[RMDB]
RNA sequence: GGGAACGACUCGAGUAGAGUCGAAAACUGGAGAUGAUCGAGCGCCACGAGGAGGGCGUUCUCCUGCGCUUGUCCGCACAGAUCCUCGAGGGUAGCCUCCUUGAAGGUACGGAGCACUUCGAGCGCGGCACUACCCAUAUUUCGAUAUGGGUAGUGCAAAAGAAACAACAACAACAAC
Reactivity to DMS in 0.01 (KOAc 150mM, MgCl2 10mM, bicine 150mM(pH8.5), 24C), signal-to-noise 3, nucleotides 027 to 126: c060u020g000g000a040g020a090u010g000a230u020c030g010a130g000c030g010c020c040a070c060g020a050g010g020a080g010g000g010c010g010u010u000c000u000c020c020u000g010c060g050c050u000u000g010u010c050c020g010c010a070c080a090g000a100u010c010c000u000c010g000a020g000g000g000u010a150g000c150c060u000c000c010u000u000g000a080a070g010g010u000a060c080g010g010a040g000c050a120c160u000u010c040g010a040g000c070g020c040g000
Structure probing data (DMS) for a 177-nucleotide construct.
Source: RMDB library OK2TST, as collected in RNAgym.
The RNA was probed in 150 mM KOAc, 10 mM MgCl2 and 150 mM bicine (pH 8.5) at 24 C.